[RMDB]
RNA sequence: GGGAACGACUCGAGUAGAGUCGAAAAUGGGAUGGACGUACGCGCCGGGCGGUGAAAUCGUUGCUGAAACGUCCACGAUGUGCGUUACUGCUAGCCGAGCGAUUGAUCGAAGAGGGGAGUCAAUUGCGAGUAGUGUUCGUUUCGACGAACACUACUCAAAAGAAACAACAACAACAAC
Reactivity to DMS in 0.01 (KOAc 150mM, MgCl2 10mM, bicine 150mM(pH8.5), 24C), signal-to-noise 2, nucleotides 027 to 126: u020g010g020g020a090u010g010g020a040c030g010u000a050c090g010c050g050c090c090g010g000g000c030g010g000u000g010a100a090a070u010c100g000u000u000g010c090u020g010a040a050a050c020g020u020c030c020a120c060g000a060u000g040u010g010c000g040u000u000a090c050u000g010c070u000a090g030c060c050g000a130g030c030g000a100u000u010g000a080u000c090g020a050a130g010a100g000g030g000g030a090g030u000c050a040a090u010u010g000c220
Reactivity to 2A3 in 0.01 (KOAc 150mM, MgCl2 10mM, bicine 150mM(pH8.5), 24C), signal-to-noise 2, nucleotides 027 to 126: u060g030g000g040a040u080g020g040a010c040g000u060a020c020g000c020g000c070c080g000g010g030c060g000g100u110g080a090a070a000u090c040g070u120u060g010c040u060g040a140a100a020c010g020u030c010c000a010c010g110a140u080g000u000g020c030g000u030u040a080c040u060g070c040u030a040g010c030c040g040a030g010c010g040a050u010u080g060a030u050c060g030a050a040g030a090g020g000g040g010a000g020u050c000a040a090u070u070g040c040